The record gives the reactivity of an RNA of 177 nucleotides to DMS and 2A3. Conditions: 150 mM KOAc, 10 mM MgCl2 and 150 mM bicine (pH 8.5), 24 C. Values cover nucleotides 27 to 126. Reactivities are rounded to 0.1 and cut off at 0 and 3. 2A3 is a SHAPE reagent: it acylates the 2'-hydroxyl of flexible nucleotides of all four kinds.
RNA sequence: GGGAACGACUCGAGUAGAGUCGAAAAGAUAUGGAGAUACUGCAUGGCGAGGAUCUUACUGGAUCGGAAACGAUCUUAAGGGAGCCAUGGUAUCUCCUAAGUCAAACCGACCGGUUCGCCGGUCGGAUCCAUAAGAAUAGUUCGCUAUUCUUAUGGAAAAAGAAACAACAACAACAAC
Reactivity to DMS in 0.01 (KOAc 150mM, MgCl2 10mM, bicine 150mM(pH8.5), 24C), signal-to-noise 8, nucleotides 027 to 126: g000a010u000a030u010g000g000a020g010a010u000a010c010u020g030c300a040u000g010g010c000g000a070g020g010a010u020c000u000u000a010c300u010g000g010a010u000c000g010g010a010a010a030c010g010a010u000c000u000u000a010a010g000g010g000a010g030c000c000a020u000g000g000u000a000u000c000u000c000c000u000a000a050g000u000c000a100a160a240c010c000g000a010c000c010g000g010u000u010c270g020c000c000g010g000u000c000g000g000a010
Reactivity to 2A3 in 0.01 (KOAc 150mM, MgCl2 10mM, bicine 150mM(pH8.5), 24C), signal-to-noise 8, nucleotides 027 to 126: g000a000u020a010u050g010g000a010g000a010u020a010c050u180g300c120a090u050g000g000c020g100a300g050g000a010u000c000u000u020a040c120u110g030g000a010u000c000g000g000a000a010a000c000g000a000u000c000u010u010a010a000g000g000g000a000g000c000c000a000u020g000g000u000a000u000c000u000c000c000u000a000a000g000u000c000a020a030a110c000c000g000a000c010c010g020g090u080u100c300g040c120c000g010g000u000c010g000g000a020